The data come from the RNA Mapping Database (RMDB), library OK3TST. This 207-nucleotide RNA was probed chemically with 2A3. Reactivities are given for positions 27 through 156. 2A3 adducts were read by reverse transcription with SuperScript II with manganese. The RNA was probed in 150 mM KOAc, 10 mM MgCl2 and 150 mM bicine (pH 8.5) at 24 C.
RNA sequence: GGGAACGACUCGAGUAGAGUCGAAAAUGACUUCGGGUCCUAUGAAAACCUCACCCUUCAAACAGAAGAAACAGUCACCACAGAAGUUCAACCUGAACCUACACCAGCCCCAACACCUGAACCAACAAUAGUAACAGAAACAGUCCAAGAAACACCACCCAUUAAGCAAGUUCGCUUGCUUAAUGGGAAAAGAAACAACAACAACAAC
Reactivity to 2A3 in 0.01 (KOAc 150mM, MgCl2 10mM, bicine 150mM(pH8.5), 24C), signal-to-noise 1, nucleotides 027 to 156: u090g000a020c020u010u000c040g010g010g000u080c000c000u160a180u170g100a030a090a040a060c000c000u030c050a050c000c000c000u050u120c060a070a140a220c100a070g020a090a000g000a000a090a020c000a030g060u040c040a070c070c000a070c030a020g020a130a000g040u300u000c010a020a020c020c000u040g000a040a020c000c020u030a030c060a010c070c000a000g000c020c020c010c100a030a030c010a020c010c010u020g060a060a030c040c000a010a000c000a000a020u020a060g130u020a070a000c070a120g070a120a040a000c080a030g010u040c070c050a060a000g150a060a000a040c040a010c300c030a040
Background:
The 2A3 profile rests on 542 reads.